Structure probing data (2A3 and DMS) for a 177-nucleotide construct. 2A3 adducts were read by reverse transcription with SuperScript II with manganese. DMS adducts were read by reverse transcription with MarathonRT.
[RMDB]
RNA sequence: GGGAACGACUCGAGUAGAGUCGAAAAUGAGACUAUUCCCACACAGUUGUUCCCACUCUUAUUUGUGACUAUGGCCUUCGUUAUGUUGUUGGUUAAACACAAACACACCUUUUUGACACUUUUCUUGCAAUUAGCAAUCGUUCGCGAUUGCUAAUUGAAAAGAAACAACAACAACAAC
Reactivity to 2A3 in 0.01 (KOAc 150mM, MgCl2 10mM, bicine 150mM(pH8.5), 24C), signal-to-noise 3, nucleotides 027 to 126: u150g020a030g030a030c030u030a060u050u000c000c000c010a000c000a000c000a000g000u010u010g000u040u000c030c030c000a030c020u080c020u070u210a150u060u020u030g020u000g030a030c040u060a060u090g010g000c020c000u040u000c040g080u130u110a170u280g260u230u100g030u000u000g040g030u020u030a040a110a000c030a010c000a000a050a000c050a010c020a030c030c010u060u130u010u080u090g020a040c050a000c070u070u050u020u030c020u000u020g000
Reactivity to DMS in 0.01 (KOAc 150mM, MgCl2 10mM, bicine 150mM(pH8.5), 24C), signal-to-noise 3, nucleotides 027 to 126: u000g010a150g000a110c130u010a120u020u000c010c020c000a150c180a100c170a020g010u000u020g010u000u000c000c000c000a180c220u000c080u000u000a100u000u000u000g010u000g000a080c110u020a030u010g010g010c000c030u010u010c050g010u000u000a090u000g000u000u000g030u000u000g000g030u000u010a060a090a060c130a030c060a050a040a040c100a050c050a090c070c020u000u000u010u000u010g000a110c100a170c200u030u000u000u000c050u000u020g000